[RMDB]
RNA sequence: GGGAACGACUCGAGUAGAGUCGAAAAGACCUUCAGUUCGCUGAAGGUCGAUGAUGGUAAGAGAGAUUACCAUCUGUUAAGUGAUAUGGAUAAGAUCUCUCAGUGAACGUGCUUUCGAGCACGUUAAUUGCAUACGAGCAUUCGUGCUCGUAUGCAAAAAAGAAACAACAACAACAAC
Reactivity to 2A3 in 0.01 (KOAc 150mM, MgCl2 10mM, bicine 150mM(pH8.5), 24C), signal-to-noise 2, nucleotides 027 to 126: g010a000c000c000u000u000c010a000g000u010u070c120g060c080u040g030a000a000g010g010u010c000g010a020u010g000a000u000g010g020u020a120a010g010a000g000a000g000a020u020u000a010c000c010a000u020c020u010g120u100u150a080a100g050u080g210a080u110a080u280g200g050a060u070a160a080g040a080u010c000u000c000u000c060a010g040u030g210a020a000c000g000u010g000c000u080u080u110c220g040a000g000c000a000c000g000u010u000a030a010
Reactivity to DMS in 0.01 (KOAc 150mM, MgCl2 10mM, bicine 150mM(pH8.5), 24C), signal-to-noise 3, nucleotides 027 to 126: g000a010c000c000u000u010c000a010g010u000u010c240g040c010u030g000a020a000g000g000u000c000g010a040u010g010a050u010g000g000u000a050a220g000a020g000a040g010a040u000u000a040c020c000a000u000c000u020g020u000u020a090a130g010u020g000a140u010a130u020g000g010a150u000a040a080g010a020u000c000u000c000u010c020a250g000u000g000a030a010c020g000u010g000c000u000u000u010c190g010a030g000c000a000c000g010u000u000a020a090